Conditions: 150 mM KOAc, 10 mM MgCl2 and 150 mM bicine (pH 8.5), 24 C. This 207-nucleotide RNA was probed chemically with 2A3. It was measured as part of the RMDB library M2RFOK. Reactivities are given for positions 27 through 156.

RNA sequence: GGGAACGACUCGAGUAGAGUCGAAAAACUGACGGUACGCCGUCAGAACGGUAGAAAAGAUGGUUUGAAAACCACGCUUUCUACCAAUAUAGUAAAUAAAUAGGCGGAGCGGUCAUACGUGACCGCAAAAACAUCCUUGGCUUCGGCCAAGGAUGAAGAAUUAGCCACUGUUCGCAGUGGCUAAUUCAAAAGAAACAACAACAACAAC
Reactivity to 2A3 in 0.01 (KOAc 150mM, MgCl2 10mM, bicine 150mM(pH8.5), 24C), signal-to-noise 1, nucleotides 027 to 156: a010c000u000g010a000c000g050g000u010a010c150g000c040c000g000u010c000a000g030a020a040c080g000g000u000a000g000a040a040a010a010g020a050u030g040g110u020u170u290g170a190a190a000a000c000c010a010c050g030c010u000u010u000c000u000a000c000c000a000a000u020a000u000a000g030u020a000a080a150u140a020a160a030u130a090g140g000c060g090g000a050g000c000g000g060u030c000a010u060a100c110g040u000g010a050c030c000g020c000a010a010a010a010a010c010a000u000c000c000u000u000g000g000c000u030u020c220g070g000c000c000a000a000g000g000a000u000g000a000a000